[RMDB]
RNA sequence: GGGAACGACUCGAGUAGAGUCGAAAAAGGUGAUUUCUCCUGCACCUUUAUCAAUGGAGGAACUCAACUUUGCUGUGGGUCCCAAAGGGACCUUAGGUGCAGACAGUUACCGGCGGUGAAGUGUGAGCAUAGGUUCGUGUCUUCGGACACGAACCAACAUUCAAGGAAUCUUCGGAUUCCUUGAAUGAAAAGAAACAACAACAACAAC
Reactivity to 2A3 in 0.01 (KOAc 150mM, MgCl2 10mM, bicine 150mM(pH8.5), 24C), signal-to-noise 4, nucleotides 027 to 156: a000g010g000u000g000a000u000u070u020c000u020c010c010u140g050c020a010c000c030u060u290u110a030u030c080a030a050u300g000g000a000g000g010a040a030c010u010c010a000a020c000u010u000u020g000c000u010g010u090g020g000g000u010c000c010c020a150a150a090g030g010g010a010c000c000u040u080a030g000g000u010g000c020a020g120a300c020a030g040u060u100a010c000c000g030g000c020g010g000u030g000a000a010g050u130g110u050g120a010g030c040a120u120a150g000g000u000u000c010g000u000g010u000c000u030u060c190g050g000a000c000a000c010g000a000a000c000c000a000a000
Reactivity to DMS in 0.01 (KOAc 150mM, MgCl2 10mM, bicine 150mM(pH8.5), 24C), signal-to-noise 2, nucleotides 027 to 156: a010g030g000u010g010a300u010u000u000c030u000c040c030u000g030c030a050c030c030u000u010u020a100u000c150a070a170u010g020g030a130g010g010a060a080c010u000c020a060a010c000u000u000u010g020c000u010g010u000g030g010g030u000c000c000c000a070a150a210g020g040g000a030c000c000u010u000a000g040g080u020g010c050a180g000a200c080a160g020u010u000a030c000c010g040g000c060g000g000u000g020a030a050g010u010g010u000g020a050g020c070a100u000a090g000g000u000u000c010g000u010g010u000c010u000u010c300g090g020a020c000a000c010g010a000a000c000c020a030a050